[RMDB]
RNA sequence: GGGAACGACUCGAGUAGAGUCGAAAAGCACUAGAGGGCGUAACGGCUGGGUGUAACCCAACUCUAGGUCUGCUGAUUAGCGGGCUUGACUCCGUAACAAAUAGGCACUGGUGGUAAAAAGCAUCCCUGACCAUAUACAUCUUCGGAUGUAUAUGAAUCUUUCUCUCAGUUUCGACUGAGAGAAAGAAAAAGAAACAACAACAACAAC
Reactivity to DMS in 0.01 (KOAc 150mM, MgCl2 10mM, bicine 150mM(pH8.5), 24C), signal-to-noise 1, nucleotides 027 to 156: g030c040a110c010u000a050g020a170g000g000g040c020g010u000a120a070c080g020g060c020u000g010g020g030u010g030u010a060a300c010c000c040a010a010c020u000c080u000a040g050g000u000c000u000g060c010u000g020a170u000u010a110g020c000g010g030g000c040u000u000g010a060c020u000c010c040g000u020a070a130c110a050a060a060u010a120g030g010c050a040c030u000g010g040u000g000g000u030a030a020a080a040a050g010c030a140u010c020c010c000u000g000a150c300c000a020u000a000u020a010c000a020u000c000u010u000c300g020g030a010u000g020u000a000u020a020u000g010a050a110
Reactivity to 2A3 in 0.01 (KOAc 150mM, MgCl2 10mM, bicine 150mM(pH8.5), 24C), signal-to-noise 2, nucleotides 027 to 156: g030c030a020c060u040a000g020a050g050g090g000c000g040u070a040a020c040g110g000c010u020g010g030g000u040g080u130a100a120c000c010c020a020a040c030u020c010u060a010g000g080u010c010u000g000c000u020g050a220u080u100a040g020c010g010g000g000c020u030u060g010a030c020u010c070c000g010u040a050a000c010a040a060a050u150a070g000g020c010a010c050u030g020g000u000g020g010u100a090a120a060a050a030g000c020a030u040c000c000c010u030g040a050c050c010a000u000a000u000a000c000a000u000c010u020u050c130g150g000a000u030g010u000a000u000a000u000g000a000a060